[RMDB]
RNA sequence: GGGAACGACUCGAGUAGAGUCGAAAACGACGAACAGAAGACCCUGGACCGGGAGGGAAUAGCCCAUAGUACAAGGGGAGAUGCUAGGAGUCGGGAGAGGUCAGAACGACUGGGAAAGAAAAGAGAGAUAGAUCAAGCUUCGGCUUGAUCAAAAGAAACAACAACAACAAC
Reactivity to DMS in 0.01 (KOAc 150mM, MgCl2 10mM, bicine 150mM(pH8.5), 24C), signal-to-noise 6, nucleotides 027 to 129: c070g030a080c110g030a070a100c190a110g010a070a060g040a090c050c050c030u000g040g010a100c020c020g030g020g040a030g040g000g060a060a090u020a140g000c040c040c030a080u080a070g020u060a040c180a030a020g080g030g000g000a060g040a070u030g020c090u010a000g020g050a000g000u030c060g000g000g000a000g040a050g040g020u010c080a090g030a070a120c160g020a090c050u050g000g000g000a030a030a030g030a020a020a060a050g010a060g000a100g020a010u050a060
Reactivity to 2A3 in 0.01 (KOAc 150mM, MgCl2 10mM, bicine 150mM(pH8.5), 24C), signal-to-noise 6, nucleotides 027 to 129: c030g080a000c010g020a080a000c020a120g070a050a010g060a080c020c000c010u020g010g020a040c000c000g000g000g000a020g000g010g010a010a030u050a020g010c000c010c020a050u090a060g080u100a040c070a110a040g000g010g010g000a040g010a020u080g030c020u050a040g000g030a030g030u060c040g000g000g000a060g000a010g000g010u060c030a010g030a100a050c060g010a010c040u060g010g000g020a060a040a010g040a010a050a050a000g070a010g010a000g000a010u090a080